[RMDB]
RNA sequence: GGGAACGACUCGAGUAGAGUCGAAAAGAUAUGGAUGAACGACAUGCACGGUGUCGGAAACGACACGCGUGCAACAGCGUUAUCCUAAGUCAAAACGUGUCGGUAGUGUUCGCACUACCGACACGAAGCUAUUGAAUUAGUUCGCUAAUUCAAUAGCAAAAGAAACAACAACAACAAC
Reactivity to 2A3 in 0.01 (KOAc 150mM, MgCl2 10mM, bicine 150mM(pH8.5), 24C), signal-to-noise 4, nucleotides 027 to 126: g020a020u070a030u130g010g000a020u090g280a070a000c000g230a060c060a130u070g000c000a010c020g000g000u010g000u000c000g000g030a050a030a020c020g020a000c000a020c060g300c010g020u000g000c000a000a000c000a000g010c000g010u020u000a010u010c010c010u020a150a020g050u060c030a020a050a090a120c030g000u000g000u000c020g000g000u010a010g000u020g140u230u180c300g080c240a000c000u000a000c000c000g000a000c000a000c000g000a000a000
Reactivity to DMS in 0.01 (KOAc 150mM, MgCl2 10mM, bicine 150mM(pH8.5), 24C), signal-to-noise 3, nucleotides 027 to 126: g000a030u000a300u000g000g010a010u000g010a010a010c000g010a070c130a170u000g020c000a010c000g010g020u000g010u000c000g010g000a050a050a180c000g000a010c000a000c000g010c010g030u000g000c000a010a030c200a130g000c020g010u000u010a040u000c000c000u000a060a120g000u000c040a080a060a120a190c020g010u000g020u000c000g000g000u000a020g090u010g030u000u010c300g000c030a010c000u000a000c000c000g000a000c000a000c000g000a080a070